[RMDB]
RNA sequence: GGGAACGACUCGAGUAGAGUCGAAAAGAAUGUCUUCGGACAUUCAACAGCGCUCGUACGCGAGCGCUGAACCUCAGUUCUUCGGAACUGAGGAAGUACGAGGCUACGGCCUCGUACACCGUCGGACUACGGUCCGACGGAAGCUAGAAGCUACGGCUUCUAGCAGUUGAAGCUUCGGCUUCAACAAGAACAUCUUCGGAUGUUCAAGACUACCGUACGCGGUAGUCAAGCUGACCAGCUAUGAGGUCAUACAUCGUCAUAGCACUAGUUGCCGCUUCGGCGGCAACAAAAGAAACAACAACAACAAC
Reactivity to 2A3 in 0.01 (KOAc 150mM, MgCl2 10mM, bicine 150mM(pH8.5), 24C), signal-to-noise 3, nucleotides 027 to 266: g000a000a000u010g000u030c010u030u070c280g110g000a000c000a000u000u000c010a000a020c000a000g020c000g010c010u000c000g040u060a040c250g010c020g130a010g020c010g010c000u020g000a040a030c010c000u000c000a000g000u000u000c010u020u080c240g180g000a000a000c000u000g000a000g010g000a010a010g000u000a000c010g000a020g000g000c000u020a020c300g150g000c020c000u000c010g000u000a000c000a010c000c000g000u000c000g000g010a010c000u030a030c300g150g010u000c000c000g020a000c000g000g000a000a020g000c000u000a000g000a010a000g010c010u010a000c300g100g000c000u000u000c010u010a000g010c000a000g000u000u000g000a010a000g000c020u040u150c280g090g010c000u000u010c060a000a000c010a010a030g020a000a000c000a000u000c000u080u120c250g110g010a000u000g000u020u010c020a010a030g000a000c000u000a000c000c010g030u020a020c300g020c010g120g010u000a000g000u000c000a000a010g090c080u030g000a010c000c000a010g000c000u000a000u010g000a010g000g010u010c010a010u220a090c080a100u220c180g080u000c000a000u000a000g010c000a020c010u030a040